Conditions: 150 mM KOAc, 10 mM MgCl2 and 150 mM bicine (pH 8.5), 24 C. The record gives the reactivity of an RNA of 177 nucleotides to DMS.
RNA sequence: GGGAACGACUCGAGUAGAGUCGAAAAUGGAUCAAGGCUGCUAGCUCGUUUGUGAAAAUUGAAUGUGGAAAGGUGGCUUUAUGACAGGACUGACCACAUUAAAGGGGGUGAAUGCUGAAAAAUGCACGAUCUGGUGGUUUUUCGAAACCACCAGAUCAAAAGAAACAACAACAACAAC
Reactivity to DMS in 0.01 (KOAc 150mM, MgCl2 10mM, bicine 150mM(pH8.5), 24C), signal-to-noise 1, nucleotides 027 to 126: u020g000g020a080u000c100a140a130g010g020c080u010g000c030u000a090g030c020u000c130g040u000u000u000g000u010g000a120a100a090a060u000u000g020a020a080u000g020u000g000g000a040a130a060g010g020u000g000g000c010u000u010u030a090u060g010a080c100a030g020g000a060c050u010g010a300c040c020a020c030a020u000u010a020a040a100g010g010g000g020g040u000g000a110a080u000g010c020u000g000a030a030a050a070a160u000g000c030a050c230